[RMDB]
RNA sequence: GGGAACGACUCGAGUAGAGUCGAAAACGAACUGGCCGUCGACAACCGCGCCCUGCUCGACGCGCUGUGCCGUGACUGCGAGCGACUCGGAGUUCGCUGGAGCUCACAGGUGAGCAGCCUGUCCGACUGCGUGGUGUAGUUUCGACUACACCACGCAAAAAGAAACAACAACAACAAC
Reactivity to 2A3 in 0.01 (KOAc 150mM, MgCl2 10mM, bicine 150mM(pH8.5), 24C), signal-to-noise 2, nucleotides 027 to 126: c010g050a030a020c030u040g030g000c000c000g040u010c010g000a050c020a100a020c010c030g000c000g020c020c000c000u080g000c050u010c030g010a040c020g060c000g000c050u040g010u070g040c070c020g000u030g030a030c030u070g020c050g080a040g010c030g000a030c010u050c160g100g010a140g070u170u020c020g010c060u000g080g010a010g020c020u010c020a040c030a040g000g030u060g080a030g010c010a010g020c000c030u020g010u010c000c040g030a050c060
Reactivity to DMS in 0.01 (KOAc 150mM, MgCl2 10mM, bicine 150mM(pH8.5), 24C), signal-to-noise 1, nucleotides 027 to 126: c040g000a040a000c130u030g000g000c060c000g020u000c050g040a020c110a100a070c160c070g000c000g000c140c090c110u020g000c040u000c000g040a090c050g050c060g010c020u000g030u030g000c010c030g100u000g000a040c020u000g070c000g010a000g010c000g000a050c050u000c040g000g000a120g010u010u010c080g030c070u000g010g000a110g000c020u000c030a090c040a050g010g000u080g000a110g050c090a200g000c000c010u000g010u050c000c030g030a120c110
This 177-nucleotide RNA was probed chemically with 2A3 and DMS. For DMS the reverse transcriptase was MarathonRT. Reactivities are given for positions 27 through 126. For 2A3 the reverse transcriptase was SuperScript II with manganese. Conditions: 150 mM KOAc, 10 mM MgCl2 and 150 mM bicine (pH 8.5), 24 C.